Chemical mapping of a 207-nucleotide RNA with DMS and 2A3. For 2A3 the reverse transcriptase was SuperScript II with manganese. It was measured as part of the RMDB library OK3TST. For 2A3, 2,985 sequencing reads were counted. The DMS profile rests on 2,137 reads.

RNA sequence: GGGAACGACUCGAGUAGAGUCGAAAAUGUUACCAGCCACUACAAAAACACACUGAGGAACACAGACCAGUGACACUAUGGAGAAACCACAUAAACAAGUAUGCAAAAUAACCAGCUAACAUCAUGGUAACAGGAUGAAAGUCACACAUAACAGUACCAAUCGACAUUCUUUCGAGAAUGUCGAUUGAAAAGAAACAACAACAACAAC
Reactivity to DMS in 0.01 (KOAc 150mM, MgCl2 10mM, bicine 150mM(pH8.5), 24C), signal-to-noise 2, nucleotides 027 to 156: u000g020u000u000a060c010c010a130g010c030c020a070c040u000a300c010a000a070a190a130a020c040a090c010a200c040u000g020a010g040g020a160a080c130a190c020a090g020a050c020c000a160g000u000g000a070c040a120c130u000a100u000g070g000a110g000a110a060a100c020c070a030c080a090u020a050a050a140c070a030a060g030u010a040u000g040c140a010a030a100a050u030a040a070c030c000a120g050c040u010a030a150c060a050u000c040a010u010g000g020u020a060a050c040a080g010g040a060u000g000a070a090a030g030u000c040a040c110a020c090a050u000a010a090c060a080g070u000a090c140
Reactivity to 2A3 in 0.01 (KOAc 150mM, MgCl2 10mM, bicine 150mM(pH8.5), 24C), signal-to-noise 5, nucleotides 027 to 156: u050g010u020u060a030c010c000a000g070c010c020a020c030u100a060c060a030a130a030a090a000c050a000c000a020c030u060g030a100g100g050a170a010c060a020c030a090g080a070c010c010a010g020u030g040a010c020a010c060u080a080u100g040g010a050g070a050a050a030c020c030a030c000a070u150a050a120a030c040a080a030g080u060a070u120g020c060a040a060a030a030u080a030a060c010c020a030g020c020u030a040a030c010a040u070c010a030u050g000g000u010a020a010c010a020g050g000a010u040g060a010a130a000g060u060c030a010c010a000c020a140u150a180a010c020a030g110u120a050c130